[RMDB]
RNA sequence: GGGAACGACUCGAGUAGAGUCGAAAACUAACAACAAAUGCUAUAUCAAAUAUUUGCUGCAUUCGACUUGUUUAAAAGUCUUUCUUUGCUUUUUUGGCUACUGCGCAAAGCCAGUAAAUGGUGCGGGAUUCAUUAGUACGUUCGCGUACUAAUGAAUAAAAGAAACAACAACAACAAC
Reactivity to DMS in 0.01 (KOAc 150mM, MgCl2 10mM, bicine 150mM(pH8.5), 24C), signal-to-noise 8, nucleotides 027 to 126: c110u010a080a120c020a030a030c020a050a050a040u010g010c090u000a110u010a130u010c140a070a090a170u000a060u000u000u000g010c040u000g010c080a110u000u000c070g000a030c020u000u000g010u000u000u010a040a100a050a020g010u000c020u000u000u000c020u000u000u000g010c030u000u000u000u010u010u010g020g010c020u000a090c070u000g000c070g010c080a080a090a080g010c040c010a040g010u010a050a050a110u000g010g020u000g010c060g010g000g000
Reactivity to 2A3 in 0.01 (KOAc 150mM, MgCl2 10mM, bicine 150mM(pH8.5), 24C), signal-to-noise 7, nucleotides 027 to 126: c010u070a040a010c020a020a000c010a000a090a020u080g010c030u080a050u060a060u300c060a040a140a090u150a130u120u080u090g010c010u020g000c010a040u030u040c010g010a010c020u050u030g140u190u300u140a060a170a010a020g010u000c000u020u060u000c030u050u070u080g040c000u070u120u060u030u110u090g030g000c010u050a050c050u150g050c050g000c060a100a050a030g020c010c010a030g020u080a020a090a120u090g040g020u070g020c040g010g020g050
Structure probing data (DMS and 2A3) for a 177-nucleotide construct. For 2A3, 9,188 sequencing reads were counted. Conditions: 150 mM KOAc, 10 mM MgCl2 and 150 mM bicine (pH 8.5), 24 C.